[RMDB]
RNA sequence: GGGAACGACUCGAGUAGAGUCGAAAAAUUGAAACGAUCGCCACGUUGGUUGAUAUGGCGGAGCAGGCGACGGGGCAGCGCGGAACGGUAGGUAUGGGCAUUCCUGGCUCAAUUUCGCCUUACACCGGUUAUGUUCUCUCUUCGGAGAGAACAUAACAAAAGAAACAACAACAACAAC
Reactivity to 2A3 in 0.01 (KOAc 150mM, MgCl2 10mM, bicine 150mM(pH8.5), 24C), signal-to-noise 1, nucleotides 027 to 126: a020u060u110g040a060a040a020c080g020a080u050c050g020c000c000a000c050g020u060u080g140g110u070u100g020a080u050a060u210g040g000c000g010g000a030g000c060a010g050g000c010g030a040c020g000g000g020g030c020a010g000c050g000c030g030g010a040a000c010g050g040u070a040g040g000u070a090u170g000g010g030c020a040u100u050c010c000u050g040g000c000u020c040a040a050u060u140u100c050g020c050c030u020u070a040c050a010c020c010g000
Reactivity to DMS in 0.01 (KOAc 150mM, MgCl2 10mM, bicine 150mM(pH8.5), 24C), signal-to-noise 3, nucleotides 027 to 126: a100u010u010g000a100a100a090c080g000a100u010c060g010c010c030a070c100g010u010u010g020g010u010u010g010a100u010a080u000g010g000c020g000g000a130g000c050a100g010g020c040g010a050c100g030g000g010g000c030a050g010c060g030c070g000g000a040a090c090g010g000u010a040g010g000u000a080u000g010g000g010c020a130u000u000c020c030u000g020g000c020u000c030a050a110u000u010u000c100g000c000c000u000u000a060c110a110c030c080g020